[RMDB]
RNA sequence: GGGAACGACUCGAGUAGAGUCGAAAAAUUCGCUGACUUUCGAGUCAGCGAAUAUUUUGACCUUUGUGAGCCAGGCGAGGAUCAUGCCCCAUUGGGGGCAUGGGAGCCUGUUCGCUCACUCUGGUAUAAUAGAGACUCAUGUUCGCAUGAGUCUCAACCUCUUCAUACACUUCGGUGUAUGAAGAGGAAAAGAAACAACAACAACAAC
Reactivity to 2A3 in 0.01 (KOAc 150mM, MgCl2 10mM, bicine 150mM(pH8.5), 24C), signal-to-noise 1, nucleotides 027 to 156: a000u000u000c000g030c000u000g000a000c000u050u120u090c230g070a000g000u020c000a000g000c000g000a010a000u000a000u000u100u080u140g070a030c000c010u000u060u000g000u000g000a000g000c000c000a000g000g000c000g000a190g000g010a000u000c000a000u000g000c000c020c010c020a150u220u300g220g020g020g040g000c010a000u000g000g000g000a010g000c000c020u000g000u030u030c010g000c000u000c000a000c000u000c000u000g000g010u030a070u020a210a150u150a060g010a000g000a000c000u000c000a000u010g020u050u070c200g000c110a000u000g000a000g020u020c000u000c000a000a000